[RMDB]
This 177-nucleotide RNA was probed chemically with 2A3 and DMS. For DMS, 4,110 sequencing reads were counted. Values cover nucleotides 27 to 126. It was measured as part of the RMDB library OK2TRN.

RNA sequence: GGGAACGACUCGAGUAGAGUCGAAAAAGUGUGGGCCUGGGUUAGGGUUAGGGUUAGUCCUGGUUCCACACCGCAGGUGGCCCUGUGACUAGGAGCAGCCACCUUGCAUCCCAGUUGCCCCAGCAGGGAUCCCUGAAGAUUUCGAUCUUCAGGGAUCAAAAGAAACAACAACAACAAC
Reactivity to 2A3 in 0.01 (KOAc 150mM, MgCl2 10mM, bicine 150mM(pH8.5), 24C), signal-to-noise 2, nucleotides 027 to 126: a000g040u040g010u030g000g010g020c030c010u020g020g000g030u030u050a030g040g000g110u030u100a060g070g040g100u060u020a020g010u020c000c010u010g010g000u240u230c000c000a010c000a010c000c010g010c020a000g030g000u000g000g000c060c020c000u000g030u040g060a110c110u100a020g020g030a090g070c100a000g000c020c000a000c010c000u000u070g000c020a030u000c020c000c000a000g070u080u120g060c000c000c000c030a010g050c010a040g030g070
Reactivity to DMS in 0.01 (KOAc 150mM, MgCl2 10mM, bicine 150mM(pH8.5), 24C), signal-to-noise 4, nucleotides 027 to 126: a080g010u010g010u000g010g000g000c040c030u000g010g020g010u000u000a060g010g010g000u000u000a120g010g000g000u010u000a040g000u000c010c010u010g010g000u000u000c020c020a040c040a010c010c100g020c030a020g010g010u000g010g000c080c050c020u000g020u010g020a130c230u010a020g020g010a210g020c160a200g000c000c010a000c000c010u000u010g050c010a220u000c000c010c010a150g010u000u000g000c050c010c010c040a090g010c130a140g020g010